Source: RMDB library RNAMAK, as collected in RNAgym. Chemical mapping of a 207-nucleotide RNA with 2A3 and DMS. For DMS, 5,847 sequencing reads were counted. DMS adducts were read by reverse transcription with MarathonRT. Values are in units of 0.01, from 0 to 300, in steps of 10. The 2A3 profile rests on 6,450 reads.
RNA sequence: GGGAACGACUCGAGUAGAGUCGAAAACUCUUUUUCGAAAGAGCAUACUCCUAAGUCAAGAACGAAUAUUCUUUGUCAGCUUGGUAUCGGAAACGAUACAGAGCUUGGAUUUAAGAAUACUAUUCUUGAUAUGGACGACAGCCCGCUUCGGCGGGAAGUUAAAAUAAGCUUUCGAGCUUAUUUUAACAAAAGAAACAACAACAACAAC
Reactivity to 2A3 in 0.01 (KOAc 150mM, MgCl2 10mM, bicine 150mM(pH8.5), 24C), signal-to-noise 5, nucleotides 027 to 156: c000u020c000u040u040u010u080u120c150g130a060a000a000g010a010g010c030a040u080a110c020u030c000c000u040a170a040g020u000c000a000a000g000a020a010c050g050a300a190u010a010u000u010c000u030u010u020g010u010c000a000g000c010u020u040g050g000u010a000u000c000g020g040a130a050a070c010g000a000u000a000c020a010g010a010g010c000u060u120g060g010a030u200u250u190a010a000g000a000a000u010a020c020u040a030u010u010c000u000u000g000a010u000a040u090g010g010a010c070g030a040c060a030g090c000c010c000g000c000u050u070c210g150g000c010g000g000g010a010a010
Reactivity to DMS in 0.01 (KOAc 150mM, MgCl2 10mM, bicine 150mM(pH8.5), 24C), signal-to-noise 2, nucleotides 027 to 156: c010u000c000u020u010u000u000u000c260g010a020a020a020g010a030g080c030a090u000a090c080u000c010c000u010a090a260g020u000c000a010a040g010a020a020c040g030a050a060u000a010u000u000c010u010u000u000g010u010c020a020g000c020u000u000g000g070u000a010u000c010g010g000a200a120a290c010g010a020u000a000c000a040g010a020g000c010u000u010g030g020a040u000u000u000a000a010g020a030a020u000a020c050u000a110u000u000c010u000u000g010a010u000a300u000g000g010a030c010g010a150c070a130g020c000c000c020g050c000u000u000c270g020g030c000g000g020g000a000a020